[RMDB]
RNA sequence: GGGAACGACUCGAGUAGAGUCGAAAACUUAUUGGAUGUUUUAGAUCAAUACAAAGAUUUCUUUGGUAAUAAUGCACAAGCAGUUCAAAGAGAUUCUGGUAAGAGUGGAACUGGCAACUAUUUAACCGUUUUCAUAUCGUUUCGACGAUAUGAAAACAAAAGAAACAACAACAACAAC
Reactivity to 2A3 in 0.01 (KOAc 150mM, MgCl2 10mM, bicine 150mM(pH8.5), 24C), signal-to-noise 1, nucleotides 027 to 126: c000u070u040a000u050u210g070g050a070u050g150u080u120u130u110a090g020a070u060c030a060a070u080a170c060a020a150a020g020a080u030u070u000c030u000u050u000g050g010u090a080a090u130a150a050u150g000c010a120c030a250a140g010c010a000g050u070u030c000a050a000a000g000a010g010a000u160u000c020u040g040g080u100a040a040g000a030g020u060g010g000a000a030c010u010g040g000c010a030a030c030u150a110u060u110u080a030a100c050c000
Reactivity to DMS in 0.01 (KOAc 150mM, MgCl2 10mM, bicine 150mM(pH8.5), 24C), signal-to-noise 2, nucleotides 027 to 126: c030u000u000a080u000u000g000g030a060u000g010u000u000u000u000a050g010a080u000c020a060a120u000a080c050a060a080a020g020a110u010u010u000c000u000u000u000g000g000u000a050a100u010a080a120u010g010c040a110c300a110a120g000c000a030g010u010u000c040a030a030a070g000a060g000a010u000u000c040u000g000g020u000a050a050g000a030g020u010g010g010a020a070c050u000g000g000c050a090a080c080u000a070u020u010u010a100a110c210c110